RNA sequence: GGGAACGACUCGAGUAGAGUCGAAAAAUUAGUUUGUUUUCAUGCUACUGAUUAAGACGUAUCCAAGACUGGGAAGAAAAAGGGGUUUAAUUGGACUUACAGUUCCACAUGGCUGGGGAGGCCUCAAAUCAUGGCGGGAGGUGAAAGGCACUUCUUAAACCAUACGUCAGUUCGCUGACGUAUGGUUAAAAGAAACAACAACAACAAC
Reactivity to 2A3 in 0.01 (KOAc 150mM, MgCl2 10mM, bicine 150mM(pH8.5), 24C), signal-to-noise 1, nucleotides 027 to 156: a000u080u080a050g070u040u140u110g090u040u010u150u270c100a080u070g030c000u020a010c000u040g000a030u020u130a020a020g050a050c070g040u050a110u060c040c070a030a030g030a060c070u070g040g000g010a060a060g020a000a030a020a100a090g060g000g000g010u180u000u120a140a090u050u150g050g000a010c070u090u020a030c140a090g000u190u050c030c000a040c000a040u190g050g000c030u010g020g040g000g030a000g000g000c050c000u040c010a020a020a000u020c020a020u060g000g040c040g030g060g010a040g010g010u090g050a000a090a000g030g010c010a000c040u000u000c000u000u000a000